The record gives the reactivity of an RNA of 207 nucleotides to DMS and 2A3. In probing experiments dimethyl sulfate is read out at A N1 and C N3, which are open when not base-paired. The RNA was probed in 150 mM KOAc, 10 mM MgCl2 and 150 mM bicine (pH 8.5) at 24 C. For 2A3 the reverse transcriptase was SuperScript II with manganese. For DMS, 1,596 sequencing reads were counted.

[RMDB]
RNA sequence: GGGAACGACUCGAGUAGAGUCGAAAACUAUUACAAUCCGCGAUGACGGUUUAGCUCUAAACACAGGAGAGGGUCUCACUCUUGUGCGUGACAGACUAAGUGUAAACCUCGGCAAAGAUUUGCAGUUUGUGGACAACACCGUCUCACUGGCAUUAAGAAAUAGCUACCCUUUCGAGGGUAGCUAUUUAAAAGAAACAACAACAACAAC
Reactivity to DMS in 0.01 (KOAc 150mM, MgCl2 10mM, bicine 150mM(pH8.5), 24C), signal-to-noise 1, nucleotides 027 to 156: c020u000a070u010u000a210c100a060a100u000c000c060g040c110g020a050u020g010a130c020g000g030u000u000u000a140g060c030u010c020u010a170a180a000c020a040c030a060g000g000a000g010a100g000g000g000u000c120u000c020a210c010u000c000u000u010g000u020g020c000g040u000g000a060c090a090g010a040c040u000a030a010g010u000g040u000a030a010a030c020c010u000c070g010g060c180a120a080a050g020a060u000u010u000g050c030a090g010u000u000u000g010u000g000g020a070c020a090a070c150a040c010c040g010u000c030u010c040a070c050u020g010g020c060a060u020u000a050a120g020
Reactivity to 2A3 in 0.01 (KOAc 150mM, MgCl2 10mM, bicine 150mM(pH8.5), 24C), signal-to-noise 1, nucleotides 027 to 156: c000u030a020u170u140a050c030a000a060u010c000c050g010c040g070a100u110g010a000c000g000g090u030u070u090a010g010c000u000c060u130a040a040a030c000a000c000a030g030g000a010g050a070g120g150g040u030c140u090c050a060c000u010c000u050u030g000u030g020c000g160u160g060a060c020a050g010a050c000u030a160a160g060u020g010u100a180a000a000c000c030u040c090g090g000c030a030a000a090g110a070u060u100u040g000c000a000g000u040u140u120g020u080g030g060a030c030a020a000c050a000c010c030g000u010c020u000c010a040c090u110g010g000c040a030u130u070a060a040g080